[RMDB]
RNA sequence: GGGAACGACUCGAGUAGAGUCGAAAAAGAAGCGUACCGAGCGCGCACUAUUUCGGCUUACCUAUCUUCGUGGGUCCGGUUCGAUCCGCGCGGUCAGAAUGUCUCAAUUCGAGUAAUCAAUUGUGCAGAGAUGAGGUUAGUUCGCUAACCUCAUCUCAAAAGAAACAACAACAACAAC
Reactivity to 2A3 in 0.01 (KOAc 150mM, MgCl2 10mM, bicine 150mM(pH8.5), 24C), signal-to-noise 1, nucleotides 027 to 126: a050g120a110a030g000c010g030u080a040c070c030g070a040g040c040g000c010g000c010a020c060u040a140u010u030u040c000g010g030c040u020u060a060c000c010u030a060u060c070u110u020c000g000u030g000g040g000u020c040c030g160g030u150u190c050g010a050u020c010c020g010c000g000c010g000g000u000c000a000g030a140a070u070g080u050c030u030c120a030a060u020u060c040g000a010g060u070a030a120u080c050a020a100u090u080g040u070g040c000a040
Reactivity to DMS in 0.01 (KOAc 150mM, MgCl2 10mM, bicine 150mM(pH8.5), 24C), signal-to-noise 1, nucleotides 027 to 126: a070g000a090a170g010c000g040u000a170c110c050g030a030g010c070g010c000g030c030a190c090u000a070u000u000u000c040g020g000c060u000u000a030c060c020u000a080u000c150u010u000c070g030u010g030g000g000u000c050c060g000g000u010u000c130g010a070u000c050c040g050c020g000c170g010g020u000c070a070g000a130a060u010g030u030c070u000c070a090a020u000u000c110g020a070g000u000a110a150u050c030a020a050u000u000g010u000g000c090a230
Chemical mapping of a 177-nucleotide RNA with 2A3 and DMS. The DMS profile rests on 720 reads. 2A3 adducts were read by reverse transcription with SuperScript II with manganese. The 2A3 profile rests on 1,095 reads.